RNA sequence: GGGAACGACUCGAGUAGAGUCGAAAAAGUGAGUAUGGCUCGUUACGACGAGCCAUACUCACAACGGUUUUCCUAAAUCGUCGUGAGACGGACCUUGGAAAACCUAGGAUUUAAAUAACUAGGUCAAAUUAGCCUAGAUCCUUCGGGAUCUAGGCAACUCCCAUACAUAGUUCGCUAUGUAUGGGAGAAAAGAAACAACAACAACAAC
Reactivity to DMS in 0.01 (KOAc 150mM, MgCl2 10mM, bicine 150mM(pH8.5), 24C), signal-to-noise 1, nucleotides 027 to 156: a190g020u000g000a040g000u010a020u010g000g060c000u020c020g070u000u000a100c220g050a130c020g020a040g010c000c000a010u010a000c010u010c010a010c000a000a050c060g000g010u000u000u000u000c010c000u000a030a050a090u000c010g020u000c000g000u000g000a300g000a060c030g000g020a020c010c010u010u000g000g000a040a040a020a020c020c000u000a030g020g000a180u010u010u010a130a180a170u010a140a110c130u000a020g000g020u000c030a030a080a120u000u010a070g000c010c000u000a010g000a010u000c030c010u000u000c300g040g000g030a030u010c010u020a010g000g040c000a000a000
Reactivity to 2A3 in 0.01 (KOAc 150mM, MgCl2 10mM, bicine 150mM(pH8.5), 24C), signal-to-noise 3, nucleotides 027 to 156: a000g000u000g000a000g010u010a000u000g000g010c010u000c030g030u020u050a070c270g010a000c000g010a140g010c000c000a000u000a000c000u000c000a000c000a000a000c000g000g010u000u000u000u010c000c000u000a010a000a010u050c000g010u000c010g020u020g140a110g000a020c000g000g000a000c000c000u010u020g010g000a000a010a000a000c010c000u010a020g060g030a010u100u130u270a110a190a080u120a070a030c110u070a020g000g000u000c030a000a040a150u200u160a040g000c010c000u000a000g010a000u000c000c010u020u090c150g030g000g000a000u000c000u000a000g000g010c010a000a000
This 207-nucleotide RNA was probed chemically with DMS and 2A3.
2A3 adducts were read by reverse transcription with SuperScript II with manganese.
The 2A3 profile rests on 2,400 reads.
As a SHAPE reagent, 2A3 marks flexible, mostly unpaired nucleotides at the ribose 2'-OH.